Chemical mapping of a 177-nucleotide RNA with 2A3 and DMS.
[RMDB]
RNA sequence: GGGAACGACUCGAGUAGAGUCGAAAACGGCCGACCGUGGGCAACGUCACAGAACGGACAACGGCGGGUACAAAUAGCGCCGAGGAUCAUAAACGUUGCUGUGCCGUGGUUGAAGCAUUCCGCCAGAGUCGUAAUGAGGGUUCGCCCUCAUUACGACAAAAGAAACAACAACAACAAC
Reactivity to 2A3 in 0.01 (KOAc 150mM, MgCl2 10mM, bicine 150mM(pH8.5), 24C), signal-to-noise 1, nucleotides 027 to 126: c010g100g020c040c020g040a060c020c010g050u100g000g040g070c060a070a060c010g020u030c000a010c000a010g030a070a000c010g010g030a000c040a050a070c050g010g000c000g040g070g040u110a080c100a100a250a090u260a160g110c030g010c020c000g040a030g120g010a110u070c050a040u240a150a090a020c000g030u020u050g160c030u020g010u060g000c000c030g040u040g050g000u060u120g040a160a020g030c070a110u000u000c010c030g020c030c000a010g020a000
Reactivity to DMS in 0.01 (KOAc 150mM, MgCl2 10mM, bicine 150mM(pH8.5), 24C), signal-to-noise 2, nucleotides 027 to 126: c200g020g000c040c060g010a090c060c060g030u000g050g020g060c070a150a040c020g000u020c000a060c110a100g000a030a020c100g000g020a120c060a050a110c000g000g020c000g000g000g010u010a220c280a100a050a120u010a070g000c030g000c010c010g040a070g030g010a100u000c110a100u020a130a110a170c020g000u000u010g000c020u010g000u000g000c060c010g030u010g010g070u000u000g010a080a190g000c060a090u000u020c040c030g010c040c020a120g010a220
Conditions: 150 mM KOAc, 10 mM MgCl2 and 150 mM bicine (pH 8.5), 24 C.